[RMDB]
The record gives the reactivity of an RNA of 177 nucleotides to DMS and 2A3.
For DMS the reverse transcriptase was MarathonRT.
The reactions ran in a buffer of 150 mM KOAc, 10 mM MgCl2 and 150 mM bicine (pH 8.5), at 24 C.

RNA sequence: GGGAACGACUCGAGUAGAGUCGAAAAAGCACCGCAGUCACCAGUUUGUGGAGGGAUUCUGGAAGAACAAUGUGCAGCAGUACCAUGUGCAGUAUGAGGAUAACAUAGUUACCAAAAUGCUUGCGGUGGUAAACUACCCUUUCGAGGGUAGUUUACCAAAAGAAACAACAACAACAAC
Reactivity to DMS in 0.01 (KOAc 150mM, MgCl2 10mM, bicine 150mM(pH8.5), 24C), signal-to-noise 2, nucleotides 027 to 126: a100g020c070a020c000c020g000c000a060g040u010c070a160c020c030a040g000u010u010u010g020u000g020g020a020g000g030g000a060u000u000c000u040g000g010a090a060g020a060a050c130a100a040u000g000u000g000c080a050g000c050a040g000u060a090c030c000a010u050g010u020g060c000a000g010u000a020u000g000a300g020g000a090u000a000a010c030a230u030a200g000u000u000a040c050c080a030a050a050a010u000g000c010u020u050g010c000g000g020u000
Reactivity to 2A3 in 0.01 (KOAc 150mM, MgCl2 10mM, bicine 150mM(pH8.5), 24C), signal-to-noise 6, nucleotides 027 to 126: a020g050c030a020c030c010g000c020a010g020u040c050a010c050c000a040g020u050u130u080g090u090g020g030a030g020g010g000a020u090u000c010u030g040g030a100a030g030a090a030c060a100a080u110g020u030g020c020a030g020c000a000g050u030a040c050c030a050u130g070u090g080c010a010g000u040a030u020g030a030g040g030a090u010a040a000c050a090u170a110g030u000u020a000c000c000a040a020a000a020u040g020c000u040u080g000c020g030g040u040